Structure probing data (2A3) for a 177-nucleotide construct. The data come from the RNA Mapping Database (RMDB), library OK1LIB. Values cover nucleotides 27 to 126. For 2A3 the reverse transcriptase was SuperScript II with manganese.
RNA sequence: GGGAACGACUCGAGUAGAGUCGAAAAGCACGUAGGUUCAGAUGAUGGGCCCGCAUCUGUACGAAAGCCAGACGAAAGUCCAGCCUACGUGCAUGAGCACGCGGGCCCCGUGCUCUACUGCAAAAGAGCCGCUAUAGGCAUUCGUGCCUAUAGCGGCAAAAGAAACAACAACAACAAC
Reactivity to 2A3 in 0.01 (KOAc 150mM, MgCl2 10mM, bicine 150mM(pH8.5), 24C), signal-to-noise 1, nucleotides 027 to 126: g000c000a010c000g000u000a000g000g090u080u140c070a000g000a090u050g000a010u070g010g000g060c000c000c000g000c000a000u000c000u000g060u150a070c080g100a120a220a000g060c050c010a000g000a000c020g010a160a120a000g000u010c000c010a000g000c000c000u020a000c000g000u000g010c000a000u050g000a000g040c040a010c050g000c030g000g010g020c030c000c000c000g000u040g000c000u030c030u040a040c000u000g220c090a170a200a000a000g050a030